About this RNA:
Chemical mapping of a 177-nucleotide RNA with 2A3.
RNA sequence: GGGAACGACUCGAGUAGAGUCGAAAACAUUUUCGGCGUCGCAGCUGCUCUGCAGAGAAGCUCUUCCUGCUUCAGGAAGAAGCUCGACAGCCUCCGAGAGCACUCUCAAAACGAAGGCGCAAGAGAAGAUCCCUCGACCGUUCGCGGUCGAGGGAUCAAAAGAAACAACAACAACAAC
Reactivity to 2A3 in 0.01 (KOAc 150mM, MgCl2 10mM, bicine 150mM(pH8.5), 24C), signal-to-noise 1, nucleotides 027 to 126: c080a090u150u000u000u000c000g230g000c000g110u030c000g000c240a030g000c050u060g000c000u150c000u180g080c050a000g000a000g090a000a170g000c020u050c000u060u050c020c020u140g230c300u300u300c030a000g000g000a000a020g000a000a020g000c000u000c060g030a030c000a080g020c060c000u000c060c060g000a010g000a000g120c000a000c000u010c000u000c210a180a300a080a080c240g170a030a020g030g000c000g140c000a080a000g000a000g000a240a000
It was measured as part of the RMDB library OK1LIB.